[RMDB]
RNA sequence: GGGAACGACUCGAGUAGAGUCGAAAAGGGCGCUGUUCUUCUCAUUUUUGAAUUUAUGAAAAGUAAGUUGGCACCACCUUUUCCCAAUUCCCAUAUCAAACAGAAAAAAACGCACCUGCCCUUUGGCGCCUCAGAUACUCUUCGGAGUAUCUGAGGCAAAAGAAACAACAACAACAAC
Reactivity to 2A3 in 0.01 (KOAc 150mM, MgCl2 10mM, bicine 150mM(pH8.5), 24C), signal-to-noise 2, nucleotides 027 to 126: g050g060g000c050g000c060u000g010u110u050c000u030u000c010u000c000a060u010u100u080u040u060g130a220a180u010u160u120a130u190g030a000a020a000a020g000u080a050a000g020u080u100g100g000c000a050c030c050a080c010c010u010u040u020u010c050c100c000a000a010u020u060c000c000c000a080u060a060u300c050a040a040a110c040a010g260a090a100a010a010a000a000a030c060g000c000a030c000c000u010g000c030c000c000u010u050u020g010g000c020